[RMDB]
RNA sequence: GGGAACGACUCGAGUAGAGUCGAAAAUGUUAAGAGAACCGCAAUUUGUGGAUCGCUCUUAUUGAUAGCGAUUUUUAUGAUGAAUAGUUGGAGCGGUAUUCAGAGCGGGCAUAACGCAUUUCGUCCAGAUAAUGGCUGUGUUCGCACAGCCAUUAUCAAAAGAAACAACAACAACAAC
Reactivity to 2A3 in 0.01 (KOAc 150mM, MgCl2 10mM, bicine 150mM(pH8.5), 24C), signal-to-noise 1, nucleotides 027 to 126: u010g010u000u070a000a080g130a020g000a160a000c000c000g000c070a120a130u030u100u180g060u030g040g010a030u020c000g000c040u000c010u060u090a090u060u050g090a060u260a040g030c020g010a010u000u000u020u170u160a300u150g140a060u060g010a010a010u040a030g140u130u090g000g000a010g000c040g030g020u030a030u020u020c000a010g050a040g050c000g000g000g000c050a020u060a090a000c040g000c000a040u030u010u040c040g060u060c020c000a010
Reactivity to DMS in 0.01 (KOAc 150mM, MgCl2 10mM, bicine 150mM(pH8.5), 24C), signal-to-noise 2, nucleotides 027 to 126: u000g000u010u000a080a250g010a210g000a100a110c000c000g020c010a170a140u000u010u000g020u000g030g000a000u000c010g010c000u010c020u000u000a120u000u000g010a130u010a040g000c060g020a140u000u000u010u010u010a070u020g010a140u000g020a030a060u000a110g000u010u000g000g000a010g030c020g000g000u000a070u000u000c030a080g000a140g020c030g000g000g000c040a050u000a050a120c230g000c020a000u000u000u000c170g020u000c040c030a130
An RNA of 177 nucleotides, treated with 2A3 and DMS and read out base by base. As a SHAPE reagent, 2A3 marks flexible, mostly unpaired nucleotides at the ribose 2'-OH. The reactions ran in a buffer of 150 mM KOAc, 10 mM MgCl2 and 150 mM bicine (pH 8.5), at 24 C. Source: RMDB library RFMREP, as collected in RNAgym. The 2A3 profile rests on 731 reads. DMS adducts were read by reverse transcription with MarathonRT. Values cover nucleotides 27 to 126.